[RMDB]
The record gives the reactivity of an RNA of 177 nucleotides to DMS and 2A3. Reactivities are given for positions 27 through 126. The 2A3 profile rests on 39,261 reads. The data come from the RNA Mapping Database (RMDB), library OK1LIB. For 2A3 the reverse transcriptase was SuperScript II with manganese. The RNA was probed in 150 mM KOAc, 10 mM MgCl2 and 150 mM bicine (pH 8.5) at 24 C.
RNA sequence: GGGAACGACUCGAGUAGAGUCGAAAAGCUGUCGCUGCCCGGCUCGCCGGUCCUCUACUACGGCGACGAGAUCGGGAUGGGCGACGUGAUCUGGUUGGGUGAUCGCGACGGCGUGCGCAUCCCGAUGCUAUCAAGCAUUAUUCGUAAUGCUUGAUAGAAAAGAAACAACAACAACAAC
Reactivity to DMS in 0.01 (KOAc 150mM, MgCl2 10mM, bicine 150mM(pH8.5), 24C), signal-to-noise 9, nucleotides 027 to 126: g000c030u020g010u010c030g010c000u010g010c030c010c000g010g010c060u010c050g010c010c000g010g000u020c050c030u010c090u020a090c120u020a110c060g000g000c020g000a040c130g020a060g000a040u000c020g000g000g000a030u010g000g000g010c000g010a070c030g020u010g000a020u000c010u010g010g010u010u010g000g000g020u010g000a040u010c020g010c010g000a080c060g000g010c070g020u030g010c040g000c050a050u000c000c000c000g010a030u020g010
Reactivity to 2A3 in 0.01 (KOAc 150mM, MgCl2 10mM, bicine 150mM(pH8.5), 24C), signal-to-noise 9, nucleotides 027 to 126: g040c040u060g040u090c020g010c020u030g030c000c010c000g010g010c030u040c030g040c010c010g050g070u100c030c040u100c050u080a140c040u040a060c040g020g020c010g010a030c040g060a050g010a120u030c010g000g010g030a030u070g090g080g010c030g020a020c000g010u020g010a030u000c030u080g120g040u080u080g070g020g040u100g030a050u040c020g000c010g030a080c050g070g110c080g060u190g030c080g010c020a020u010c000c000c010g000a020u080g020